[RMDB]
RNA sequence: GGGAACGACUCGAGUAGAGUCGAAAAAAGUUUCCUCAUGAUCACAAGAUCAUCGGUUUAAGAUCCAAAGAGCGUGAACUGAAUCCAACACCUAGGAUGUUUGCAUUGAUGUCCCAUCUCAUGAGGGACACUGAAUAGUGUUCGCACUAUUCAGUGUAAAAGAAACAACAACAACAAC
Reactivity to 2A3 in 0.01 (KOAc 150mM, MgCl2 10mM, bicine 150mM(pH8.5), 24C), signal-to-noise 8, nucleotides 027 to 126: a000a000g100u050u030u050c000c000u010c010a000u010g010a030u070c080a020c040a250a060g020a080u090c010a020u010c020g000g010u030u070u100a030a030g030a030u000c020c020a100a100a040g080a030g050c110g040u040g050a060a060c060u100g050a090a070u070c040c020a050a050c020a050c030c010u040a040g020g030a030u030g140u100u050u070g060c060a050u010u110g020a030u030g030u020c010c000c000a030u020c020u000c030a020u050g020a030g010g010g010
Reactivity to DMS in 0.01 (KOAc 150mM, MgCl2 10mM, bicine 150mM(pH8.5), 24C), signal-to-noise 9, nucleotides 027 to 126: a080a080g010u000u000u000c000c000u000c030a010u000g000a020u010c080a120c210a120a090g000a050u000c010a020u000c070g010g000u000u000u000a060a070g010a040u000c020c020a050a110a100g000a080g010c080g010u000g000a060a130c120u010g000a090a110u010c040c030a060a060c080a040c030c020u000a240g000g010a020u000g000u000u000u000g010c080a050u000u000g010a040u000g000u000c000c010c010a160u010c140u000c030a030u000g000a040g010g000g010